[RMDB]
This 177-nucleotide RNA was probed chemically with DMS and 2A3. For DMS, 1,425 sequencing reads were counted. Values are in units of 0.01, from 0 to 300, in steps of 10. For DMS the reverse transcriptase was MarathonRT.
RNA sequence: GGGAACGACUCGAGUAGAGUCGAAAAAGAAACAUCACUAUUUACCAGGUCAGGUCCGGAAGGAAGCAGCCAAGGCAGAUGACGCGUGUGCCGGGAUGAUGCUGGGAGGGCAAAAUAGAAAAAAAAACUCAAGUACUAGUUUCGACUAGUACUUGAGAAAAGAAACAACAACAACAAC
Reactivity to DMS in 0.01 (KOAc 150mM, MgCl2 10mM, bicine 150mM(pH8.5), 24C), signal-to-noise 2, nucleotides 027 to 126: a090g000a130a040a050c090a070u020c060a070c050u010a140u000u000u000a160c060c050a050g000g000u000c040a070g000g040u000c020c010g010g000a110a090g000g010a100a070g010c030a110g040c010c040a060a080g010g020c040a040g020a050u000g020a110c080g010c060g010u000g010u000g030c010c050g000g000g010a040u010g000a060u000g000c050u000g000g000g030a070g000g000g000c090a030a010a040a050u010a070g020a000a020a000a000a090a070a020a100a060
Reactivity to 2A3 in 0.01 (KOAc 150mM, MgCl2 10mM, bicine 150mM(pH8.5), 24C), signal-to-noise 1, nucleotides 027 to 126: a000g080a050a110a000c040a070u120c010a040c060u090a140u090u110u050a090c020c010a020g020g000u000c020a010g030g150u000c010c020g000g000a050a010g030g010a060a020g060c000a000g000c000c020a040a050g020g000c020a030g060a180u150g040a140c040g030c100g080u080g050u050g000c010c010g000g030g010a030u060g010a020u060g050c040u000g000g020g000a090g040g030g080c020a000a020a050a060u240a080g150a050a010a000a010a000a000a000a000a000
The reactions ran in a buffer of 150 mM KOAc, 10 mM MgCl2 and 150 mM bicine (pH 8.5), at 24 C. Values cover nucleotides 27 to 126. The data come from the RNA Mapping Database (RMDB), library M2PK90. For 2A3, 1,272 sequencing reads were counted. 2A3 adducts were read by reverse transcription with SuperScript II with manganese.